[RMDB]
RNA sequence: GGGAACGACUCGAGUAGAGUCGAAAAGGUGUACCCAUUCAUGUGGGGCGGCGCACAGUGCUUCUGCGAUAGCGAGAACAGCCAAAUGAGCGAGGCAUACGUGGAGUUUUCUGCAGACUGCGCCGCACUCACUUACCCCGUUCGCGGGGUAAGUGAGAAAAGAAACAACAACAACAAC
Reactivity to DMS in 0.01 (KOAc 150mM, MgCl2 10mM, bicine 150mM(pH8.5), 24C), signal-to-noise 2, nucleotides 027 to 126: g000g020u000g030u000a160c010c020c000a080u000u030c240a080u000g000u000g000g010g000g030c000g020g000c010g040c010a020c120a080g040u000g020c060u000u010c000u000g080c000g000a140u010a090g000c010g010a150g030a080a090c150a110g020c040c040a030a080a120u010g030a300g000c050g000a050g000g010c000a010u010a100c150g010u000g000g000a140g000u000u010u020u000c000u000g000c030a070g030a160c190u000g010c000g020c000c000g030c020a040
Reactivity to 2A3 in 0.01 (KOAc 150mM, MgCl2 10mM, bicine 150mM(pH8.5), 24C), signal-to-noise 2, nucleotides 027 to 126: g150g000u170g070u130a040c000c020c020a030u160u250c090a060u160g030u050g050g000g020g090c000g000g000c000g010c000a000c010a050g040u080g120c020u050u050c050u150g000c030g050a080u110a080g000c010g020a110g050a200a060c060a070g010c000c000a050a180a150u300g010a120g060c050g020a070g040g000c010a010u050a130c120g000u020g020g010a070g030u210u140u010u000c050u020g000c010a030g050a180c040u010g000c010g020c000c020g000c010a000